An RNA of 170 nucleotides, treated with DMS and 2A3 and read out base by base. Values cover nucleotides 27 to 129. Conditions: 150 mM KOAc, 10 mM MgCl2 and 150 mM bicine (pH 8.5), 24 C. It was measured as part of the RMDB library 15KLIB. High 2A3 reactivity points to a flexible backbone, as in loops and unpaired stretches.
[RMDB]
RNA sequence: GGGAACGACUCGAGUAGAGUCGAAAAGCUGGCGCCGGCUGGGCAACAUUCCGAGGGGACCGUCCCCUCGGUAAUGGCGAAUGGGACCCAGAAAUCUCUCUAGAUUCCGAUAGAGAAUCGAGAGAAACAAUCCGUGUCUUCGGACACGGAAAAAGAAACAACAACAACAAC
Reactivity to DMS in 0.01 (KOAc 150mM, MgCl2 10mM, bicine 150mM(pH8.5), 24C), signal-to-noise 4, nucleotides 027 to 129: g020c030u010g030g020c000g080c040c010g010g020c030u010g020g010g020c080a170a100c030a030u020u000c010c000g010a060g020g020g080g030a200c130c270g010u060c000c000c030c040u020c030g030g020u000a000a060u020g020g060c140g020a050a100u020g010g040g000a070c050c010c080a080g020a100a100a100u040c070u000c010u040c020u040a090g000a020u000u000c010c000g060a230u000a000g010a140g000a000a000u000c000g000a040g030a000g030a030a070a040c030a140a070
Reactivity to 2A3 in 0.01 (KOAc 150mM, MgCl2 10mM, bicine 150mM(pH8.5), 24C), signal-to-noise 3, nucleotides 027 to 129: g030c000u000g030g010c010g000c000c000g010g020c020u060g000g000g000c000a010a000c010a010u020u000c000c000g000a000g030g030g010g040a050c000c070g300u280c020c000c000c000u010c010g000g000u000a010a010u010g000g020c040g080a100a060u170g080g010g000a030c000c020c000a020g060a030a100a010u040c010u000c010u000c010u020a050g000a000u000u000c030c020g110a200u120a170g200a040g000a080a000u010c010g010a000g000a000g000a030a000a000c060a000a040